This 177-nucleotide RNA was probed chemically with 2A3 and DMS.
It was measured as part of the RMDB library OK1LIB.
Values cover nucleotides 27 to 126.
[RMDB]
RNA sequence: GGGAACGACUCGAGUAGAGUCGAAAAGAAGAGGAUCAAGAGGACGACGAGGACGGCGCCGCCCCGUUCUGCGUUGACCUGGGCGGGUGCACAUCAUACUAAGCACACAUAUAUGCAUUUUAUUACACCGAUUUACGGAUUUCGAUCCGUAAAUCGGAAAAGAAACAACAACAACAAC
Reactivity to 2A3 in 0.01 (KOAc 150mM, MgCl2 10mM, bicine 150mM(pH8.5), 24C), signal-to-noise 3, nucleotides 027 to 126: g170a010a010g080a000g060g000a030u120c050a030a000g030a020g140g040a040c000g000a000c000g000a000g000g010a000c010g030g010c020g030c020c000g000c000c030c000c040g070u010u000c040u130g190c000g020u060u040g070a050c030c030u070g010g030g000c060g000g050g000u010g010c050a040c010a110u130c000a030u040a140c050u060a040a110g010c020a040c010a010c020a040u070a010u020a020u230g020c060a060u010u090u080u130a240u170u070a080c090a010
Reactivity to DMS in 0.01 (KOAc 150mM, MgCl2 10mM, bicine 150mM(pH8.5), 24C), signal-to-noise 1, nucleotides 027 to 126: g020a070a180g000a030g030g000a060u040c180a000a300g030a000g000g000a100c060g000a000c020g040a080g070g000a130c020g000g000c300g030c000c000g030c020c030c030c030g000u040u010c000u000g000c100g100u000u000g000a080c000c000u000g000g000g000c240g000g000g000u000g000c150a060c300a280u100c000a030u000a110c150u000a020a090g150c080a230c270a070c130a150u010a090u060a000u030g020c020a060u000u100u000u000a050u000u000a220c300a040